[RMDB]
Conditions: 150 mM KOAc, 10 mM MgCl2 and 150 mM bicine (pH 8.5), 24 C.
This 177-nucleotide RNA was probed chemically with 2A3 and DMS.
Values cover nucleotides 27 to 126.
DMS adducts were read by reverse transcription with MarathonRT.
The 2A3 profile rests on 7,748 reads.
RNA sequence: GGGAACGACUCGAGUAGAGUCGAAAAGGAUGCUGAGCGCGACGGGACGCUGAAGCCCGGGGACACGAUUAUCGAGCCGACAUCCGGGAACACCGGUGGGUGCCAGGCCCAGAGGGGGUGGCCAGGAGAGGUAUUAUUUAUUCGUAAAUAAUACCUCAAAAGAAACAACAACAACAAC
Reactivity to 2A3 in 0.01 (KOAc 150mM, MgCl2 10mM, bicine 150mM(pH8.5), 24C), signal-to-noise 3, nucleotides 027 to 126: g030g010a040u070g010c030u050g030a040g110c070g000c010g040a030c030g010g020g010a030c030g010c150u100g060a090a020g030c000c010c020g020g010g030g020a020c030a000c120g030a020u090u120a100u250c030g020a020g030c000c000g030a040c010a030u020c000c000g000g020g000a140a040c050a020c040c010g030g040u050g030g030g010u050g050c030c020a040g030g010c010c010c010a030g070a070g060g030g020g010g010u050g020g000c000c010a030g030g020a060
Reactivity to DMS in 0.01 (KOAc 150mM, MgCl2 10mM, bicine 150mM(pH8.5), 24C), signal-to-noise 8, nucleotides 027 to 126: g020g010a050u000g010c020u000g010a100g020c030g020c050g010a100c070g000g000g000a090c050g010c110u000g010a140a150g010c020c020c010g010g000g000g010a110c120a070c080g010a130u000u010a100u010c040g000a090g020c020c010g010a070c070a060u000c010c010g000g000g000a090a100c110a090c040c030g010g010u000g010g000g020u000g010c030c050a070g010g010c030c020c040a090g000a120g010g010g010g010g030u000g000g010c030c050a060g010g000a200